[RMDB]
RNA sequence: GGGAACGACUCGAGUAGAGUCGAAAAAUGGGGUUUAACGCUAGCUAUGUCAACGGGGUGUUUCCUAGGUUGGCAACAUAACGGCAAAUCAACAGUUAAACCUAAAUGCGGGUGUAAAUCAUGCAAGGGCGCGCCGUAUAAAUCAAUUGACACUCUAUGUACUAAUCACGUUCGCGUGAUUAGUACAAAAAGAAACAACAACAACAAC
Reactivity to DMS in 0.01 (KOAc 150mM, MgCl2 10mM, bicine 150mM(pH8.5), 24C), signal-to-noise 1, nucleotides 027 to 156: a060u000g000g000g000g000u000u010u000a000a050c040g020c030u010a200g050c020u000a220u020g000u000c020a070a070c020g020g000g020g030u000g010u010u000u000c030c050u000a090g000g000u000u000g000g000c030a050a000c070a120u000a040a030c060g020g000c030a120a120a100u010c040a070a080c090a070g000u000u000a020a040a020c010c000u000a030a090a070u000g040c000g000g000g020u000g000u020a100a090a090u000c060a120u000g040c040a080a140g000g020g050c020g050c030g030c070c010g040u010a080u000a030a060a160u020c090a050a160u000u000g010a120c070a110c020u000c050u000a250
Reactivity to 2A3 in 0.01 (KOAc 150mM, MgCl2 10mM, bicine 150mM(pH8.5), 24C), signal-to-noise 2, nucleotides 027 to 156: a000u120g030g000g000g000u010u020u010a020a010c040g000c000u020a000g000c010u030a030u180g010u040c030a010a010c010g030g000g000g040u150g180u150u150u140c020c000u040a040g250g000u010u000g020g000c000a030a050c040a030u100a000a040c030g020g040c020a020a070a090u130c100a000a060c010a010g010u000u020a000a000a000c000c010u000a010a080a000u050g010c030g000g090g000u050g010u030a050a200a040u130c090a030u050g020c030a050a130g070g010g000c020g000c000g020c010c010g030u040a090u130a050a060a010u080c060a000a160u040u110g000a020c010a010c060u000c000u000a020
Conditions: 150 mM KOAc, 10 mM MgCl2 and 150 mM bicine (pH 8.5), 24 C. Structure probing data (DMS and 2A3) for a 207-nucleotide construct.